[RMDB]
RNA sequence: GGGAACGACUCGAGUAGAGUCGAAAAGAUAUGGAAGGCUUGGACCUAUGGUGUCAACAGCUCGGAAACGAGACAUGACGAGAGUAGCUAGCCUUCCUAAGUCAAAAGGCACUGUUCGCAGUGCCAACGCUAUACAGGCCUUCGGGCCUGUAUAGCGAAAAGAAACAACAACAACAAC
Reactivity to DMS in 0.01 (KOAc 150mM, MgCl2 10mM, bicine 150mM(pH8.5), 24C), signal-to-noise 1, nucleotides 027 to 126: g000a020u010a300u000g020g000a040a000g000g000c000u000u000g000g020a110c250c020u000a020u000g020g050u040g040u000c000a020a050c260a150g030c020u000c000g020g010a040a100a110c020g000a020g010a000c130a290u000g000a020c030g000a130g010a080g010u000a090g020c020u000a060g000c000c000u000u020c000c000u010a020a040g000u000c010a050a020a160a130g000g000c020a000c000u000g000u000u000c290g000c030a000g000u000g010c000c000a010a030
Reactivity to 2A3 in 0.01 (KOAc 150mM, MgCl2 10mM, bicine 150mM(pH8.5), 24C), signal-to-noise 1, nucleotides 027 to 126: g000a000u040a010u030g010g000a000a020g000g000c060u150u160g140g100a150c020c000u050a090u090g300g010u300g090u040c010a030a020c020a180g050c020u000c000g010g000a000a020a020c010g000a000g010a080c020a060u120g020a010c040g010a040g020a050g300u150a010g090c000u000a000g000c010c000u000u040c010c000u000a010a010g030u000c020a000a000a190a240g010g050c000a000c000u000g000u110u120c300g010c170a000g010u010g000c010c000a000a000

Chemical mapping of a 177-nucleotide RNA with DMS and 2A3. Source: RMDB library TTRDEL, as collected in RNAgym. As a SHAPE reagent, 2A3 marks flexible, mostly unpaired nucleotides at the ribose 2'-OH. For DMS, 773 sequencing reads were counted. The RNA was probed in 150 mM KOAc, 10 mM MgCl2 and 150 mM bicine (pH 8.5) at 24 C.